An RNA of 177 nucleotides, treated with 2A3 and DMS and read out base by base. Reactivities are given for positions 27 through 126. For 2A3 the reverse transcriptase was SuperScript II with manganese. For DMS the reverse transcriptase was MarathonRT. Conditions: 150 mM KOAc, 10 mM MgCl2 and 150 mM bicine (pH 8.5), 24 C. The DMS profile rests on 3,772 reads.
[RMDB]
RNA sequence: GGGAACGACUCGAGUAGAGUCGAAAACGGCUAACCACCCAAGAGAGUAGAAGUCGUCCCUUUAUGGGCUCAAAUUUAGAACGAUAUAGUAAAGCUUAUUGCCAAAGACUUAAACUACUUUGUAGUACUAGAUAAUAAAGUUCGCUUUAUUAUCUAGAAAAGAAACAACAACAACAAC
Reactivity to 2A3 in 0.01 (KOAc 150mM, MgCl2 10mM, bicine 150mM(pH8.5), 24C), signal-to-noise 4, nucleotides 027 to 126: c010g000g020c010u020a080a030c020c010a020c030c030c000a030a010g110a000g000a000g060u060a010g010a120a000g020u010c010g010u020c010c000c000u040u150u030a080u080g020g020g000c010u020c060a080a140a050u180u230u150a070g020a090a020c040g020a020u040a030u050a190g110u070a060a090a010g030c010u030u090a030u070u130g020c010c010a060a070a020g020a060c000u060u110a100a120a010c010u030a010c000u060u100u190g060u010a020g000u010a070
Reactivity to DMS in 0.01 (KOAc 150mM, MgCl2 10mM, bicine 150mM(pH8.5), 24C), signal-to-noise 4, nucleotides 027 to 126: c120g000g010c020u000a080a130c090c100a190c020c010c030a110a110g010a110g000a040g020u000a060g010a120a050g020u000c010g010u000c010c010c010u010u010u010a070u010g010g000g030c070u000c050a040a090a140u010u010u020a060g020a090a110c060g010a060u000a040u000a050g000u010a080a100a120g010c020u010u010a040u000u000g010c030c040a050a070a110g000a060c050u000u010a050a050a300c010u000a020c020u010u010u000g020u000a050g030u000a180